Notes: The record gives the reactivity of an RNA of 170 nucleotides to DMS and 2A3.
RNA sequence: GGGAACGACUCGAGUAGAGUCGAAAAGGGUCCGCUGUUCCAUUCUUUCUUACCUUGUGGCCGGCAUGGUCCCAGCCUCCUCGCUGGCGCCGGCUGGGCAACAUUCCGAGGGGACCGUCCCUCGGUACUACUCAUGAGUUCGCUCAUGAGAAAAGAAACAACAACAACAAC
Reactivity to DMS in 0.01 (KOAc 150mM, MgCl2 10mM, bicine 150mM(pH8.5), 24C), signal-to-noise 7, nucleotides 027 to 129: g000g000g000u000c040c060g040c090u000g000u030u010c030c020a160u000u000c060u010u010u010c070u040u030a140c070c060u030u020g000u050g030g020c040c030g030g000c000a060u070g000g000u040c300c020c010a050g030c020c080u030c090c050u040c090g030c040u000g000g000c160g040c030c040g000g000c000u000g000g030g060c070a040a050c090a100u020u010c030c010g000a000g020g000g000g010a160c140c210g010u050c020c020c030u000c030g000g030u000a000c060u040a100
Reactivity to 2A3 in 0.01 (KOAc 150mM, MgCl2 10mM, bicine 150mM(pH8.5), 24C), signal-to-noise 9, nucleotides 027 to 129: g040g010g010u040c010c010g010c070u040g050u070u010c040c040a140u090u040c020u070u110u020c030u080u080a190c030c020u090u080g070u140g100g010c010c000g000g000c020a100u160g040g010u090c030c000c000a010g010c000c020u080c020c020u050c050g020c030u040g030g010c040g010c010c000g020g020c000u020g010g020g010c020a060a030c010a130u170u040c000c000g000a010g010g010g010g030a120c030c010g200u260c010c000c010u000c000g000g000u000a010c000u020a010

Source information: Source: RMDB library 15KLIB, as collected in RNAgym. For DMS the reverse transcriptase was MarathonRT. Values cover nucleotides 27 to 129. The 2A3 profile rests on 46,645 reads. The reactions ran in a buffer of 150 mM KOAc, 10 mM MgCl2 and 150 mM bicine (pH 8.5), at 24 C. The DMS profile rests on 47,769 reads.